[RMDB]
RNA sequence: GGGAACGACUCGAGUAGAGUCGAAAAGAAAGAAAGAAAGGCUUCUGUUGGGUCAGACAGUUUGGUGCGCUAGUUGUGUGCUUAGCAGCAACGCACACCAGGCUGACUGCCUUAGCAGUGUGGCCAACUAAAUGGCUAAGUUCGCUUAGCCAUUUAGAAAAGAAACAACAACAACAAC
Reactivity to DMS in 0.01 (KOAc 150mM, MgCl2 10mM, bicine 150mM(pH8.5), 24C), signal-to-noise 6, nucleotides 027 to 126: g010a080a110a100g010a100a090a070g000a080a110a110g010g000c000u000u020c000u000g010u000u000g010g000g000u000c010a010g000a100c000a000g010u000u020u000g000g010u000g000c040g000c020u010a120g010u000u000g010u000g020u000g000c090u030u040a150g010c010a100g010c010a010a020c070g010c000a020c000a000c000c010a010g000g000c000u000g000a070c000u000g000c040c020u000u000a000g010c000a000g000u040g020u030g010g010c000c000a080a200
Reactivity to 2A3 in 0.01 (KOAc 150mM, MgCl2 10mM, bicine 150mM(pH8.5), 24C), signal-to-noise 9, nucleotides 027 to 126: g100a020a040a010g120a030a090a010g120a060a100a030g010g000c020u040u030c000u070g020u020u010g020g010g010u060c010a000g000a040c000a000g000u000u000u000g010g000u010g000c010g000c030u070a130g020u010u010g030u030g050u050g060c050u120u090a050g020c010a000g000c000a000a000c020g000c000a010c000a000c010c000a000g010g000c000u000g000a030c000u000g000c000c000u000u010a000g000c000a000g010u080g090u130g110g000c000c000a000a000

The data come from the RNA Mapping Database (RMDB), libraries RFM100 and RFMREP. An RNA of 177 nucleotides, treated with DMS and 2A3 and read out base by base.